The record gives the reactivity of an RNA of 177 nucleotides to DMS and 2A3. The reactions ran in a buffer of 150 mM KOAc, 10 mM MgCl2 and 150 mM bicine (pH 8.5), at 24 C.
[RMDB]
RNA sequence: GGGAACGACUCGAGUAGAGUCGAAAACGCAAGCGUUCAGGUGAACCUGAACCUCCAGCCCAUGAGAUCGAGUGCAUCGCGCGUGUGACAUUGGCUCUGGGCCCAAUGUCUUUCCACGGCACAGAGCCUCAUCGGAGUCAUUCGUGACUCCGAUGAGAAAAGAAACAACAACAACAAC
Reactivity to DMS in 0.01 (KOAc 150mM, MgCl2 10mM, bicine 150mM(pH8.5), 24C), signal-to-noise 4, nucleotides 027 to 126: c110g000c130a130a070g000c140g000u000u000c010a020g000g010u040g040a150a170c000c000u000g000a010a030c030c020u010c120c080a130g010c010c020c020a090u040g000a090g000a050u020c070g010a090g020u020g030c070a080u010c040g000c080g000c030g020u010g010u000g020a080c140a070u050u000g000g000c020u000c040u010g000g000g030c050c000c070a060a070u010g000u000c080u010u030u000c060c010a080c140g000g000c020a020c010a040g000a050g010c050
Reactivity to 2A3 in 0.01 (KOAc 150mM, MgCl2 10mM, bicine 150mM(pH8.5), 24C), signal-to-noise 9, nucleotides 027 to 126: c080g030c050a050a020g030c040g110u020u010c020a020g050g040u190g200a200a250c000c000u000g010a020a020c000c000u020c010c020a070g020c010c010c010a080u170g060a020g010a080u100c080g020a040g120u080g040c050a050u060c050g010c010g000c020g050u030g040u040g030a040c020a130u020u090g030g010c020u040c070u120g040g040g020c000c000c000a040a020u030g010u010c000u020u050u000c040c020a030c030g020g000c020a010c020a060g050a030g040c010